[RMDB]
RNA sequence: GGGAACGACUCGAGUAGAGUCGAAAACUGUGAUGCCCUUAGAUGUUCUGGGCUGCACGCGCACUACAAUGUUAUUUCUAGGUAUAUUGUAAAGAUAAAGGAUAACUCGGUUGGGAUUGCGUUCUGUGUAAAUGGAUCUAUUCGUAGAUCCAUUUACAAAAGAAACAACAACAACAAC
Reactivity to 2A3 in 0.01 (KOAc 150mM, MgCl2 10mM, bicine 150mM(pH8.5), 24C), signal-to-noise 3, nucleotides 027 to 126: c020u060g020u040g030a040u100g050c010c030c000u040u070a210g040a240u160g050u180u070c030u040g000g000g050c040u090g010c000a000c040g050c000g020c040a050c030u110a020c060a070a090u060g030u050u030a110u100u090u080c120u060a060g130g060u040a070u020a020u100u090g050u090a090a130a100g040a030u050a070a120a010g060g000a000u010a040a050c020u010c080g110g000u040u020g030g000g030a130u020u130g000c080g080u070u000c020u020g020u020
Reactivity to DMS in 0.01 (KOAc 150mM, MgCl2 10mM, bicine 150mM(pH8.5), 24C), signal-to-noise 3, nucleotides 027 to 126: c070u000g000u020g010a180u000g010c030c000c020u020u000a080g010a130u010g010u020u010c060u000g010g020g040c050u000g010c030a050c050g010c070g030c110a070c060u010a050c060a050a040u000g010u010u010a040u010u000u010c090u020a100g020g010u010a040u020a010u020u000g010u030a020a070a120g010a080u000a050a100a050g000g010a070u020a020a050c030u020c130g000g000u000u000g000g000g020a160u010u000g030c080g000u000u000c020u000g000u000

Conditions: 150 mM KOAc, 10 mM MgCl2 and 150 mM bicine (pH 8.5), 24 C. Chemical mapping of a 177-nucleotide RNA with 2A3 and DMS.